RNA sequence: GGGAACGACUCGAGUAGAGUCGAAAAUCGCAUGGACCGCACAAUGAAGAUACGGUGCUUCUGUAUCGUACUUAUUGUUUCUGGUGCGCUGUUAACCGAGGUAAAUAAUAACCGGAGUCUCUCCGGCAAAGAUACGUCUAUUCGUAGACGUAUCUUUAAAAGAAACAACAACAACAAC
Reactivity to DMS in 0.01 (KOAc 150mM, MgCl2 10mM, bicine 150mM(pH8.5), 24C), signal-to-noise 9, nucleotides 027 to 126: u020c050g010c030a060u020g010g010a070c300c040g010c300a040c020a040a020u010g010a020a020g010a130u000a000c010g000g010u000g000c020u020u050c190u030g020u000a000u000c000g010u000a020c030u000u000a040u000u000g000u000u010u010c040u020g010g020u010g000c030g010c080u010g000u010u010a100a160c040c010g000a100g010g010u030a050a060a080u030a070a070u050a130a240c000c000g000g000a020g010u030c120u040c020u000c010c000g000g000c230
Reactivity to 2A3 in 0.01 (KOAc 150mM, MgCl2 10mM, bicine 150mM(pH8.5), 24C), signal-to-noise 9, nucleotides 027 to 126: u060c010g010c030a040u100g070g040a040c030c020g110c030a010c010a020a070u180g060a110a030g050a060u010a010c000g000g020u010g000c000u190u150c080u150g010u020a010u010c000g000u010a000c010u030u030a020u030u040g060u020u080u060c090u120g050g000u020g030c020g000c050u060g040u130u100a060a030c010c020g020a050g070g090u140a070a070a090u170a080a070u100a130a060c000c000g040g010a010g150u090c060u020c000u000c160c000g000g000c020